Chemical mapping of a 170-nucleotide RNA with 2A3 and DMS. For 2A3 the reverse transcriptase was SuperScript II with manganese. The DMS profile rests on 6,298 reads. Reactivities are given for positions 27 through 129. It was measured as part of the RMDB library 15KLIB.

[RMDB]
RNA sequence: GGGAACGACUCGAGUAGAGUCGAAAACCCUCCCCCAGCGGGUCGCCCAGGAAUGGCGGGACCCCACUUCAGCAGGGUCCGCGUUCCAUCCUUUCUUACCUGAUGGCCGGCAUGGUCCCAGCCUCCUCAACAGGCCUCUUCGGAGGCCUGAAAAGAAACAACAACAACAAC
Reactivity to 2A3 in 0.01 (KOAc 150mM, MgCl2 10mM, bicine 150mM(pH8.5), 24C), signal-to-noise 1, nucleotides 027 to 129: c000c000c000u010c000c000c000c000c000a000g040c000g020g020g000u000c010g000c010c000c000a020g010g070a070a070u070g270g140c000g010g040g030a060c020c030c000c000a020c050u270u260c080a070g060c020a090g010g000g020u000c000c000g060c010g030u050u060c010c020a040u060c010c000u090u160u050c040u030u060a120c040c030u020g020a030u060g080g000c040c010g000g010c070a070u080g000g010u000c000c010c010a040g020c000c000u020c010c010u000c000a030a050
Reactivity to DMS in 0.01 (KOAc 150mM, MgCl2 10mM, bicine 150mM(pH8.5), 24C), signal-to-noise 3, nucleotides 027 to 129: c020c010c030u000c020c000c000c000c020a160g040c040g000g010g040u030c000g000c020c000c000a090g020g030a040a040u030g130g050c040g060g050g010a000c000c010c000c060a070c090u100u050c090a050g120c130a190g010g030g020u020c010c010g030c000g070u040u000c000c000a200u000c080c000u060u080u040c000u050u020a130c100c060u080g060a140u040g000g060c000c070g030g000c040a080u040g020g000u060c050c000c000a140g030c040c050u020c030c070u040c050a060a100